[RMDB]
RNA sequence: GGGAACGACUCGAGUAGAGUCGAAAACCGUAGGGAUCACUACCCACCGCUGAAACAGGCGAAGAACUAGCGUUCGAAAGAGCGCUAGGGAGCCUGGAGUACGGCGAGGUGAUCCCUAAACGGAAAACUGUUCAAUCACUUCGGUGAUUGAACAGAACCUUAGAUACUGCUUCGGCAGUAUCUAAGGAAAAGAAACAACAACAACAAC
Reactivity to DMS in 0.01 (KOAc 150mM, MgCl2 10mM, bicine 150mM(pH8.5), 24C), signal-to-noise 2, nucleotides 027 to 156: c000c030g010u000a050g030g050g020a030u020c010a040c020u000a110c040c030c010a300c140c000g000c050u000g000a300a190a180c020a040g010g000c000g000a110a140g060a170a250c030u000a000g020c030g030u060u010c000g000a190a120a300g010a010g030c020g000c000u000a010g010g000g010a300g000c000c000u050g010g000a170g020u010a120c100g030g000c010g150a040g000g060u010g000a010u000c000c010c000u010a000a010a080c010g010g000a110a060a060a170c010u000g000u010u010c000a000a010u040c000a040c060u000u010c300g120g000u000g000a030u000u000g000a000a000c000a010g030a010a090
Reactivity to 2A3 in 0.01 (KOAc 150mM, MgCl2 10mM, bicine 150mM(pH8.5), 24C), signal-to-noise 3, nucleotides 027 to 156: c010c000g010u020a000g020g010g000a000u010c000a010c030u120a110c040c080c060a070c030c020g000c020u060g020a020a030a010c010a010g010g010c010g140a220a020g000a030a010c000u000a000g000c000g000u000u010c000g010a060a080a050g000a010g000c010g020c000u000a000g000g000g010a010g010c010c000u000g010g000a000g000u020a020c190g010g000c010g000a010g010g000u010g000a000u000c000c000c000u000a000a010a000c000g060g020a040a070a020a100c000u000g000u000u000c000a000a000u000c000a010c020u060u120c300g110g000u000g000a000u000u000g000a000a000c000a000g000a000a010